[RMDB]
RNA sequence: GGGAACGACUCGAGUAGAGUCGAAAAGAUAUGGAGCCACCCACUCCCCACCCUACCGAUUGUCCGAAGAACUUCUUCGGAAACGAAGAAGGGAGGAUAGAGGUAGGAGGUGGGUGGCUCCUAAGUCCUAAUGAGCUUGGUUCGCCAAGCUCAUUAGAAAAGAAACAACAACAACAAC
Reactivity to DMS in 0.01 (KOAc 150mM, MgCl2 10mM, bicine 150mM(pH8.5), 24C), signal-to-noise 2, nucleotides 027 to 126: g000a110u000a220u010g010g000a000g030c010c000a010c000c020c010a030c020u010c070c010c000c070a300c150c010c000u000a030c000c010g000a300u000u030g020u000c020c000g000a100a170g000a200a250c020u010u000c000u000u000c010g040g020a020a050a050c030g000a000a010g010a000a010g000g010g000a050g010g000a020u000a040g010a300g000g000u000a000g000g010a050g020g000u000g000g020g030u000g000g000c000u000c000c000u000a020a060g030u000c040